[RMDB]
RNA sequence: GGGAACGACUCGAGUAGAGUCGAAAAGCGCCUGCCAAAGAGGAAACGGUUUGGUGCACGAAUCUUAAUUGGCUUGUAAGCCUUGUCACAAGUCUAGGAUCUGUCUAGUAUGUCUCAAGAAGAAUUCAGAACGGUCUAGAUUCGUCUAGACCGUUCUAAAAGAAACAACAACAACAAC
Reactivity to DMS in 0.01 (KOAc 150mM, MgCl2 10mM, bicine 150mM(pH8.5), 24C), signal-to-noise 2, nucleotides 027 to 126: g000c120g030c010c010u000g020c000c000a030a050a170g040a080g000g010a080a070a210c100g000g010u000u010u000g000g080u010g020c050a150c080g000a060a110u010c010u000u000a040a100u000u010g010g000c000u000u020g000u010a150a150g010c070c110u000u010g010u010c090a060c020a010a100g000u000c000u000a070g000g000a060u000c080u000g010u000c030u000a060g000u000a090u010g000u000c020u000c040a080a120g010a060a100g020a080a130u000u020c110
Reactivity to 2A3 in 0.01 (KOAc 150mM, MgCl2 10mM, bicine 150mM(pH8.5), 24C), signal-to-noise 1, nucleotides 027 to 126: g000c020g030c020c000u000g000c000c010a000a120a030g270a080g120g000a100a060a000c040g000g050u170u290u260g000g000u060g000c000a000c090g000a010a010u030c010u070u130a110a120u110u080g000g010c000u050u050g020u060a190a050g050c000c000u030u130g050u050c030a010c010a090a000g020u000c030u030a050g010g010a040u020c030u080g070u080c010u030a040g000u050a080u160g130u000c040u090c080a030a030g090a080a000g030a090a060u180u120c010